[RMDB]
RNA sequence: GGGAACGACUCGAGUAGAGUCGAAAAUCUCGUCAGAAGCAUUAACCCGACUGACCGAUGCGGUGGCAGGUGCAGUGGGAAGACGCUACUAAAGAAAUUGCCGAAAAACAGUUUGGAGACUGACGGGCGUAGAUGACGAUUUCGAUCGUCAUCUACGAAAAGAAACAACAACAACAAC
Reactivity to DMS in 0.01 (KOAc 150mM, MgCl2 10mM, bicine 150mM(pH8.5), 24C), signal-to-noise 3, nucleotides 027 to 126: u000c010u000c000g030u010c010a010g020a220a060g020c030a060u010u010a070a300c020c010c010g020a080c010u000g000a050c020c010g000a170u010g040c010g000g050u010g010g020c000a110g020g020u000g010c010a000g000u000g000g010g040a060a240g000a020c050g000c000u000a120c150u000a060a080a120g000a000a040a030u010u000g010c020c030g020a040a070a070a100a140c030a030g040u000u010u000g010g010a140g020a200c020u000g000a030c030g010g000g000